[RMDB]
RNA sequence: GGGAACGACUCGAGUAGAGUCGAAAAGAGCGAUUAGACAAAGGGGUAGAGCUACAUAUUAGAUAGCUGUAUAAUCGUUCAAGUUACAUCAAAAUAUCUUCAAUAUUUAUUACUUACUUUCCUUUCUGCCAGAGUACGGUAUUCGUACCGUACUCAAAGACGCUCGUCAGUUCGCUGACGAGCGUCUAAAAGAAACAACAACAACAAC
Reactivity to 2A3 in 0.01 (KOAc 150mM, MgCl2 10mM, bicine 150mM(pH8.5), 24C), signal-to-noise 2, nucleotides 027 to 156: g000a010g000c010g020a010u010u000a020g010a030c040a070a080a020g000g010g020g040u090a060g010a000g060c000u010a010c010a050u300a140u220u060a120g140a260u010a000g000c010u010g040u040a020u000a010a000u010c000g000u000u010c030a010a000g010u020u090a050c070a080u090c090a020a040a020a100u040a100u070c060u240u110c080a040a040u040a120u120u070u140a110u070u050a040c010u040u000a000c040u090u030u100c010c010u050u130u110c050u050g110c040c040a100g000a000g000u000a000c000g000g000u000a040u010u050c090g010u010a000c000c000g000u000a000c000u000c000a000a010